This 207-nucleotide RNA was probed chemically with DMS. For DMS, 7,782 sequencing reads were counted. It was measured as part of the RMDB library ARCHII. The reactions ran in a buffer of 150 mM KOAc, 10 mM MgCl2 and 150 mM bicine (pH 8.5), at 24 C.
RNA sequence: GGGAACGACUCGAGUAGAGUCGAAAACUAGGGUUAACCUGAAGGUGUGAAGCUGAUGGGAAAAAGUAACCCAAACUGUAUGUGACAGUGAGGGGGCAGGCUAGAUUCCUAUGGGCAAUGUAAAUGAACACUCAUCUGAGGCAUCGUGACCCUAUCAGUAAUAACUCAUCUUCGGAUGAGUUAUUACAAAAGAAACAACAACAACAAC
Reactivity to DMS in 0.01 (KOAc 150mM, MgCl2 10mM, bicine 150mM(pH8.5), 24C), signal-to-noise 3, nucleotides 027 to 156: c060u000a020g010g020g010u000u010a080a050c040c040u000g010a170a080g010g000u000g020u000g020a110a150g030c010u000g020a040u010g020g000g010a040a030a090a170a070g010u000a100a100c000c010c000a050a140a050c010u000g030u000a080u020g020u010g010a150c030a020g030u000g000a300g000g020g010g000g020c030a070g020g000c030u000a110g010a300u000u000c010c020u000a030u000g020g010g010c020a130a090u010g010u020a040a060a170u000g010a080a080c090a110c040u000c020a050u000c040u010g000a190g010g010c050a060u000c060g030u010g000a120c000c000c010u000a020u000c050a210